Source information: Structure probing data (2A3) for a 207-nucleotide construct. It was measured as part of the RMDB library OK3TST.
[RMDB]
RNA sequence: GGGAACGACUCGAGUAGAGUCGAAAAAGGAUCUUGUCGACGUCAACUGGGGGCCUGACGAGCCGGCGCCGCGGCUGGUGUUCGACGCGAUCGGUUCCGAACAGGACGCGACCGCGGCGGCUCUCAUGGCGCUGGUGCAGGCCGGCAUCCUCCGACCGGUCUUACAGAAUUUCGAUUCUGUAAGACCAAAAGAAACAACAACAACAAC
Reactivity to 2A3 in 0.01 (KOAc 150mM, MgCl2 10mM, bicine 150mM(pH8.5), 24C), signal-to-noise 1, nucleotides 027 to 156: a000g030g000a070u060c020u120u060g030u030c010g020a100c050g050u090c050a180a060c200u150g040g000g000g050g000c000c010u030g010a040c020g040a040g000c000c000g010g050c000g000c000c000g000c030g130g040c100u140g070g000u050g020u150u220c020g000a010c000g020c000g040a040u080c040g040g020u120u040c040c000g010a020a130c150a140g000g000a030c030g000c010g290a010c010c000g000c030g040g000c000g000g000c000u000c000u000c000a040u140g010g000c000g020c030u050g000g000u040g000c030a020g000g000c020c010g000g020c000a020u030c000c000u040c030c010g070a030c030c050

For 2A3 the reverse transcriptase was SuperScript II with manganese. For 2A3, 835 sequencing reads were counted. The reactions ran in a buffer of 150 mM KOAc, 10 mM MgCl2 and 150 mM bicine (pH 8.5), at 24 C.